This 177-nucleotide RNA was probed chemically with DMS and 2A3.
DMS adducts were read by reverse transcription with MarathonRT.
The data come from the RNA Mapping Database (RMDB), library RFMREP.
The reactions ran in a buffer of 150 mM KOAc, 10 mM MgCl2 and 150 mM bicine (pH 8.5), at 24 C.
The DMS profile rests on 17,810 reads.
Reactivities are given for positions 27 through 126.

[RMDB]
RNA sequence: GGGAACGACUCGAGUAGAGUCGAAAAUGUCAAUUUGUUAGAUGAUCAGAGGGGAAAAGAAGAGCUAGAGCAAUGGUUACGGAAUGGUAGCAAUACCAUAUCGUGAUCUCUAAUGAGCGUCCUCAUACUCCUAUAAUAUGUUCGCAUAUUAUAGGAGAAAAGAAACAACAACAACAAC
Reactivity to DMS in 0.01 (KOAc 150mM, MgCl2 10mM, bicine 150mM(pH8.5), 24C), signal-to-noise 9, nucleotides 027 to 126: u010g010u010c060a070a090u000u000u010g020u000u010a090g010a090u000g000a060u010c070a070g000a110g000g010g000g000a050a060a070a070g010a090a070g010a110g010c050u000a060g010a100g020c250a060a060u000g010g020u000u000a010c010g000g010a050a010u000g000g000u000a000g000c300a080a130u000a000c000c000a000u000a030u000c000g010u000g000a010u000c000u000c080u010a050a080u010g000a030g020c050g000u000c020c010u010c050a110u010a150
Reactivity to 2A3 in 0.01 (KOAc 150mM, MgCl2 10mM, bicine 150mM(pH8.5), 24C), signal-to-noise 7, nucleotides 027 to 126: u110g020u040c020a050a070u040u050u050g080u080u110a090g020a170u120g020a040u100c050a040g030a090g070g010g010g030a030a090a030a030g110a070a010g030a010g030c040u060a020g020a000g080c050a060a130u180g010g010u020u010a000c010g020g010a020a010u000g000g000u010a000g000c010a030a020u010a010c000c000a000u000a020u010c000g000u010g010a010u010c030u000c020u070a090a070u110g020a020g030c010g030u020c010c000u010c000a010u040a060